[RMDB]
RNA sequence: GGGAACGACUCGAGUAGAGUCGAAAAUAUUAUGGAUUUGAUAUGGCACUCGAUCACGCUGCAGAACUCCUUCGUGUCAAUGUUCAUGAUCUUCCAAUCCCUGAACCUGCUUCGGACAUGGGAAUGUAAUUUCUGUUUACAAUUGCGUUCGUGACCAUCCUUUGCUUUCUUUCGAGAAAGCAAAGGAAAAAGAAACAACAACAACAAC
Reactivity to 2A3 in 0.01 (KOAc 150mM, MgCl2 10mM, bicine 150mM(pH8.5), 24C), signal-to-noise 1, nucleotides 027 to 156: u220a040u130u050a050u130g010g070a140u110u010u080g070a030u030a080u100g000g000c000a020c080u120c100g040a080u030c010a030c060g030c030u110g000c080a140g080a290a150c050u030c070c000u130u200c060g010u000g120u140c000a080a080u080g000u070u010c030a040u060g030a060u000c000u040u020c100c000a030a070u000c010c000c000u010g030a080a080c050c000u060g040c020u080u080c210g080g000a080c070a060u060g010g000g070a000a000u030g010u020a000a000u050u050u100c040u080g140u140u110u020a030c000a030a130u070u100g000c000g020u000u050c020g030u080g110a040c110c050a030
The record gives the reactivity of an RNA of 207 nucleotides to 2A3. Conditions: 150 mM KOAc, 10 mM MgCl2 and 150 mM bicine (pH 8.5), 24 C. It was measured as part of the RMDB library OK3TST. Reactivities are rounded to 0.1 and cut off at 0 and 3.